RNA sequence: GGGAACGACUCGAGUAGAGUCGAAAAAGCAGUCGAUUCGUCGACUGCUAAUGGGUCGGGACUACAUCACUGGUUCUUCGCUAGCCCUCUUUGGACCAGUAAAAAAGAGCUUAUUCGUAAGCUCUAAUUACCGACUUGAAUUCGUUCAAGUCGGUAAAAAAGAAACAACAACAACAAC
Reactivity to 2A3 in 0.01 (KOAc 150mM, MgCl2 10mM, bicine 150mM(pH8.5), 24C), signal-to-noise 1, nucleotides 027 to 126: a000g000c000a010g030u010c010g020a030u030u150c130g070u010c000g080a030c000u040g000c010u000a000a060u120g020g000g030u050c000g000g000g030a000c020u110a030c070a130u150c060a010c010u010g010g010u020u030c000u030u080c020g010c110u070a030g000c000c030c000u090c030u050u050u000g010g000a030c020c040a030g080u110a040a040a010a000a000a010g010a000g000c000u030u040a000u080u060c180g070u000a010a000g000c000u010c000u000a000a000
Reactivity to DMS in 0.01 (KOAc 150mM, MgCl2 10mM, bicine 150mM(pH8.5), 24C), signal-to-noise 2, nucleotides 027 to 126: a030g000c000a000g010u000c010g010a040u000u000c230g020u000c000g010a010c000u010g000c010u000a010a040u010g010g010g000u030c090g010g000g000a260c080u010a030c180a110u000c110a030c020u000g030g000u000u000c020u000u000c100g000c120u000a090g000c050c020c020u010c040u000u000u000g000g020a020c000c000a030g040u020a000a030a090a070a050a060g010a050g020c010u000u000a020u000u000c200g000u000a020a000g010c000u000c010u000a020a050